RNA sequence: GGGAACGACUCGAGUAGAGUCGAAAAACAUAGGCCAUGCUUACGAGCAUGGCCUAUGACGAAUCUCAACCAAUCAAGCAUUCUACUUCUAUUGCAACACUGAGGAGCUUACGAGCUCCUCAGUGAAAAAAGAGAGUAAUGUUCGCAUUACUCUCAACUUGUAAGAUGUCUUCGGACAUCUUACAAGAAAAGAAACAACAACAACAAC
Reactivity to DMS in 0.01 (KOAc 150mM, MgCl2 10mM, bicine 150mM(pH8.5), 24C), signal-to-noise 1, nucleotides 027 to 156: a140c010a030u000a000g000g040c010c010a010u000g040c000u000u000a110c300g040a070g020c000a000u010g010g000c000c000u020a000u000g000a120c060g000a140a130u000c010u000c050a110a120c090c060a140a100u010c090a060a100g040c010a070u000u000c070u000a090c020u000u000c110u020a090u030u010g010c040a060a160c000a000c010u000g000a030g010g040a050g030c000u010u010a110c230g030a090g050c000u000c010c030u000c020a000g000u000g000a010a010a070a050a040a110g000a040g010a050g060u000a010a010u000g000u000u020c300g020c010a040u000u000a000c000u010c020u000c000a000a010
Reactivity to 2A3 in 0.01 (KOAc 150mM, MgCl2 10mM, bicine 150mM(pH8.5), 24C), signal-to-noise 2, nucleotides 027 to 156: a000c000a000u000a000g010g000c010c010a000u010g020c030u110u090a090c280g080a040g000c000a000u000g000g020c000c020u000a030u000g000a000c000g060a090a090u030c000u030c030a070a160c030c070a000a110u250c090a110a090g040c030a060u120u070c050u120a150c060u060u160c020u100a170u120u190g050c050a090a050c000a030c010u000g000a020g000g000a000g010c030u060u030a080c300g030a010g000c000u020c000c000u000c020a000g020u000g000a000a000a000a000a000a000g000a000g000a000g000u000a000a000u010g020u100u110c220g000c130a010u000u000a000c010u000c000u000c000a000a000
Source information: Structure probing data (DMS and 2A3) for a 207-nucleotide construct. The RNA was probed in 150 mM KOAc, 10 mM MgCl2 and 150 mM bicine (pH 8.5) at 24 C.